[RMDB]
RNA sequence: GGGAACGACUCGAGUAGAGUCGAAAAUAAAAGCGCGAAAAUGAUCGAUCGAUCGUUUGAACGCGCAAGUCUAAGUUUGAUACGGGCAUACUAGCUAGCUAGCUAGCAAAACAAACUUAGUAAAAAACUAAUCUCCAAUGUUCGCAUUGGAGAUUAGAAAAGAAACAACAACAACAAC
Reactivity to 2A3 in 0.01 (KOAc 150mM, MgCl2 10mM, bicine 150mM(pH8.5), 24C), signal-to-noise 2, nucleotides 027 to 126: u180a000a110a000a000g010c000g000c000g080a020a040a010a040u010g000a000u000c030g060a110u150c240g010a010u010c010g020u010u040u030g070a130a020c000g000c000g000c000a010a010g020u010c000u000a010a010g000u000u020u020g110a100u090a140c100g040g090g000c060a040u070a160c020u000a020g040c000u010a030g130c030u050a010g010c000u020a000g030c040a030a050a020a020c000a000a000a000c000u010u010a000g050u120a060a120a000a000a000a000
Reactivity to DMS in 0.01 (KOAc 150mM, MgCl2 10mM, bicine 150mM(pH8.5), 24C), signal-to-noise 3, nucleotides 027 to 126: u030a050a070a130a120g020c000g050c000g010a100a030a020a010u000g010a000u010c020g020a140u010c200g010a010u000c000g020u000u000u000g000a140a090c010g010c000g000c020a050a040g040u000c000u000a010a010g000u000u000u000g000a100u010a100c170g020g010g040c170a150u010a080c010u000a020g000c010u000a200g010c130u010a060g000c010u010a020g000c040a040a100a100a110c000a010a010a010c000u000u000a000g000u010a000a040a090a070a080a050